[RMDB]
RNA sequence: GGGAACGACUCGAGUAGAGUCGAAAAGAUAUGGACUAUGAUAGACAUGAUCCUGUGUCGGAAACGACACACGAUCAACAGCUAUAUAGUCCUAAGUCAAACCAGAUGACGUUCGCGUCAUCUGGAACCAGCAGACUAAGUUCGCUUAGUCUGCUGGAAAAGAAACAACAACAACAAC
Reactivity to DMS in 0.01 (KOAc 150mM, MgCl2 10mM, bicine 150mM(pH8.5), 24C), signal-to-noise 1, nucleotides 027 to 126: g010a030u000a050u010g010g000a020c000u000a000u010g000a010u000a040g020a040c090a260u000g000a000u000c000c080u030g020u000g000u000c000g000g020a000a000a040c010g050a020c010a020c000a010c240g000a020u000c010a150a040c230a090g040c020u030a010u010a020u000a000g010u010c000c000u010a000a060g000u000c020a200a140a240c020c000a030g030a020u040g010a020c000g010u000u030c250g020c060g000u000c000a000u000c000u020g010g020a010a080
Reactivity to 2A3 in 0.01 (KOAc 150mM, MgCl2 10mM, bicine 150mM(pH8.5), 24C), signal-to-noise 2, nucleotides 027 to 126: g010a000u010a000u050g010g030a020c010u000a010u170g290a110u150a010g030a010c300a300u300g000a020u010c010c030u010g000u000g010u010c000g000g000a000a000a000c000g000a000c000a000c000a010c030g020a000u000c040a080a100c120a090g000c010u010a000u000a000u000a020g000u030c010c000u000a000a000g010u010c000a000a080a180c000c000a000g000a000u000g000a010c040g000u070u140c300g020c010g160u010c000a000u000c010u000g000g000a010a070